[RMDB]
RNA sequence: GGGAACGACUCGAGUAGAGUCGAAAAGGCAACUUAAGAGCUUGUGGACAAGCUGAUAGUGCAUUGGUCACAAAGCAUGUUAUCAAAGGGAAAUGCCCGUAUUUCGCACAAUACUUGUCACUGCAUCCGCCUUUUUAAAAUUCGUUUUAAAAAGGCGAAAAGAAACAACAACAACAAC
Reactivity to 2A3 in 0.01 (KOAc 150mM, MgCl2 10mM, bicine 150mM(pH8.5), 24C), signal-to-noise 8, nucleotides 027 to 126: g030g000c020a040a020c080u140u110a180a030g030a010g120c030u080u080g050u100g090g050a030c000a010a010g020c030u050g090a130u090a120g070u050g040c040a130u020u050g030g020u060c060a000c020a060a090a020g090c060a110u090g030u070u070a060u060c040a060a060a060g070g010g040a060a280a120u130g110c000c010c020g030u050a170u030u080u090c060g000c020a020c010a050a040u060a090c020u010u020g030u040c010a020c050u050g000c010a060u040c040
Reactivity to DMS in 0.01 (KOAc 150mM, MgCl2 10mM, bicine 150mM(pH8.5), 24C), signal-to-noise 8, nucleotides 027 to 126: g010g010c040a070a080c080u000u000a110a140g000a140g010c020u000u000g020u000g010g010a050c020a020a020g010c070u000g010a100u000a080g020u000g010c010a200u000u000g010g000u010c140a050c020a040a070a080g000c060a060u000g000u000u000a050u010c040a040a080a120g010g010g000a070a070a090u000g010c020c020c060g010u010a110u000u000u000c050g010c060a060c080a050a110u000a050c040u000u000g000u000c020a070c060u000g000c100a110u000c140
The data come from the RNA Mapping Database (RMDB), library OK2TRN. An RNA of 177 nucleotides, treated with 2A3 and DMS and read out base by base. The 2A3 profile rests on 11,150 reads. DMS adducts were read by reverse transcription with MarathonRT. Conditions: 150 mM KOAc, 10 mM MgCl2 and 150 mM bicine (pH 8.5), 24 C.